[RMDB]
RNA sequence: GGGAACGACUCGAGUAGAGUCGAAAAUCGGUGAGCCACACCAGUGCUCCAGUGCGAAUUCUCGGCUACCCACAUGCAGAUCGUGGUAAUAUGUUCGGUUCGAGCACCCAUACCAUGACGGUAAGGCAUGACUCCACUCUUUCGAGAGUGGAGUCAUAAAAGAAACAACAACAACAAC
Reactivity to 2A3 in 0.01 (KOAc 150mM, MgCl2 10mM, bicine 150mM(pH8.5), 24C), signal-to-noise 4, nucleotides 027 to 126: u140c030g000g010u050g010a050g000c050c020a100c030a030c050c010a040g080u060g090c010u010c020c020a040g090u060g210c040g070a080a080u140u030c020u010c000g030g030c010u070a080c000c010c000a040c010a060u150g050c020a030g050a160u080c050g030u010g010g010u020a040a030u170a040u160g030u030u050c020g020g120u110u140c050g000a000g010c000a020c010c020c000a010u000a080c020c010a030u050g060a030c040g040g030u090a120a090g090g000c030
Reactivity to DMS in 0.01 (KOAc 150mM, MgCl2 10mM, bicine 150mM(pH8.5), 24C), signal-to-noise 2, nucleotides 027 to 126: u060c020g040g050u010g000a080g030c000c010a040c030a060c040c080a010g040u000g000c010u020c000c060a050g000u040g000c050g010a020a140u000u000c010u000c040g000g020c060u050a070c020c000c010a160c070a060u050g000c000a080g000a040u060c030g050u000g000g000u010a080a070u030a120u000g000u000u000c110g000g040u040u040c030g000a000g010c010a070c070c120c060a170u010a030c010c000a090u000g010a120c020g000g000u000a010a140g060g000c180